Chemical mapping of a 207-nucleotide RNA with 2A3 and DMS. It was measured as part of the RMDB library M2RFPK. The RNA was probed in 150 mM KOAc, 10 mM MgCl2 and 150 mM bicine (pH 8.5) at 24 C.

[RMDB]
RNA sequence: GGGAACGACUCGAGUAGAGUCGAAAACGGAAGCAUUAAAACCAUUCGAGCUAGUCAAUGCGUGGCGUGUCUCUACGCAGCGUGUUGGCGAAUGUAAAGAGUGACUAAGCAUGUAGUACCGAGGAUGAUAAGAGCAAUUCGUUCGCGAAUUGCUCAACUAUAACUACUACUUCGGUAGUAGUUAUAGAAAAGAAACAACAACAACAAC
Reactivity to 2A3 in 0.01 (KOAc 150mM, MgCl2 10mM, bicine 150mM(pH8.5), 24C), signal-to-noise 9, nucleotides 027 to 156: c040g030g040a070a020g040c020a030u040u120a040a030a030a080c040c000a010u030u040c050g020a030g040c030u070a030g030u010c000a000a010u010g000c010g010u030g060g000c020g010u030g110u080c060u030c070u270a000c000g000c010a010g010c000g000u010g010u010u000g000g000c000g000a010a010u060g020u040a060a110a030g030a020g020u030g020a030c040u040a040a020g050c030a040u050g020u060a060g030u040a090c020c040g020a050g070g020a040u140g010a030u120a220a130g000a000g000c000a000a000u000u000c000g020u050u080c230g010c010g100a000a000u000u000g000c000u000c000a000a000
Reactivity to DMS in 0.01 (KOAc 150mM, MgCl2 10mM, bicine 150mM(pH8.5), 24C), signal-to-noise 5, nucleotides 027 to 156: c050g010g030a200a160g020c050a080u000u000a090a080a080a130c050c020a090u000u000c020g010a250g010c040u000a160g010u000c010a040a010u000g010c010g050u000g000g060c010g000u010g030u010c170u000c090u010a080c000g010c010a040g010c010g040u000g030u010u000g010g010c000g010a060a040u000g030u010a030a080a180g010a100g020u000g010a080c050u000a070a150g010c080a060u000g030u010a100g010u000a090c050c010g010a130g020g000a110u000g020a130u010a080a130g000a020g020c010a010a010u000u000c010g010u000u010c300g040c020g000a010a020u000u000g020c000u000c010a000a050